Conditions: 150 mM KOAc, 10 mM MgCl2 and 150 mM bicine (pH 8.5), 24 C. Chemical mapping of a 177-nucleotide RNA with DMS.
RNA sequence: GGGAACGACUCGAGUAGAGUCGAAAAGAUAUGGAACUCCGAUGGACAACAGCCAUUUUAAAUGGCUCAUCUCGGAAACGAGAUGAGGCCAUUUAAAAUGGACAUGUCCUAAGGAGUUCCUAAGUCACGAUACGAAGAUGUUCGCAUCUUCGUAUCGAAAAGAAACAACAACAACAAC
Reactivity to DMS in 0.01 (KOAc 150mM, MgCl2 10mM, bicine 150mM(pH8.5), 24C), signal-to-noise 1, nucleotides 027 to 126: g030a060u000a300u000g010g030a030a010c000u000c000c020g000a300u000g000g000a000c000a000a180c300a120g000c010c010a010u000u000u010u000a000a010a000u000g020g000c010u000c000a000u000c000u000c000g000g050a040a080a250c000g000a000g000a000u000g010a040g010g000c000c000a000u000u000u000a000a000a010a000u000g010g000a040c090a080u000g000u000c040c010u010a110a300g000g000a010g000u000u000c000c000u000a000a060g010u010c070a160